The record gives the reactivity of an RNA of 177 nucleotides to DMS and 2A3. It was measured as part of the RMDB library M2PK50. The RNA was probed in 150 mM KOAc, 10 mM MgCl2 and 150 mM bicine (pH 8.5) at 24 C. For 2A3 the reverse transcriptase was SuperScript II with manganese. The DMS profile rests on 1,143 reads.
[RMDB]
RNA sequence: GGGAACGACUCGAGUAGAGUCGAAAAGUUACACGCUUCGGCGUGUAACAAAUACUCAAACGGUCGCGGAAACGAGAGGACACUCUAGGAGCCAUCCAUGCAAAACCCAUUGCUUCGGCAAUGGGAACACUUUGCUCUUGUUCGCAAGAGCAAAGUGAAAAGAAACAACAACAACAAC
Reactivity to DMS in 0.01 (KOAc 150mM, MgCl2 10mM, bicine 150mM(pH8.5), 24C), signal-to-noise 2, nucleotides 027 to 126: g000u000u000a000c000a020c000g010c000u000u010c190g040g010c010g040u000g000u010a000a000c010a030a090a050u000a100c020u000c030a080a160a110c080g000g000u000c030g030c030g000g000a030a060a090c100g000a040g000a110g010g000a070c160a060c060u000c030u000a080g000g000a130g000c050c030a070u010c020c010a140u030g000c160a080a040a080a110c010c000c000a010u000u000g000c000u000u010c190g010g000c010a000a010u000g000g000g000a000a040
Reactivity to 2A3 in 0.01 (KOAc 150mM, MgCl2 10mM, bicine 150mM(pH8.5), 24C), signal-to-noise 1, nucleotides 027 to 126: g000u000u010a010c000a000c000g020c000u030u050c150g100g000c000g000u000g010u000a000a020c010a000a010a000u040a000c000u030c000a050a100a030c050g000g030u040c010g000c030g080g040a030a070a030c080g020a000g000a020g090g030a030c040a030c070u040c030u070a060g040g030a000g020c020c020a030u020c010c000a000u080g070c010a020a060a070a140c000c000c000a000u000u000g000c000u040u010c100g030g040c000a000a000u010g000g000g000a000a000